[RMDB]
RNA sequence: GGGAACGACUCGAGUAGAGUCGAAAAUUGGUACGCUGUGUAUAUGCAGAAAAAGAUAUUAGACACCAAUUAAGCCGGGACGAAAGCCUAAUUGGAUUGCUUUCGUCUGACUAUGCGUGUUUUACAUUUCGGUCUCAUUAUUCGUAAUGAGACCGAAAAAAGAAACAACAACAACAAC
Reactivity to 2A3 in 0.01 (KOAc 150mM, MgCl2 10mM, bicine 150mM(pH8.5), 24C), signal-to-noise 1, nucleotides 027 to 126: u020u000g040g030u080a000c300g000c020u000g000u000g100u000a050u200a200u300g020c000a000g160a000a170a000a000a000g160a020u300a020u030u200a040g030a000c000a030c000c030a000a000u000u000a000a000g000c020c020g100g000g050a000c000g000a000a020a000g070c000c000u280a300a300u210u300g200g070a210u070u100g000c000u000u000u000c000g000u000c000u000g000a000c060u070a000u300g020c040g030u000g000u000u000u000u010a040c050a130u000
Reactivity to DMS in 0.01 (KOAc 150mM, MgCl2 10mM, bicine 150mM(pH8.5), 24C), signal-to-noise 1, nucleotides 027 to 126: u000u000g000g000u000a030c090g000c020u000g000u000g000u020a040u000a030u000g010c190a090g020a110a000a090a050a150g000a080u050a140u000u170a040g000a300c100a020c000c020a020a110u000u000a080a070g030c050c010g000g000g000a070c090g080a000a060a000g020c000c130u000a210a040u000u070g000g070a270u000u090g000c030u000u000u000c000g000u000c100u000g000a000c060u000a020u070g000c210g050u000g070u010u010u000u000a130c190a070u010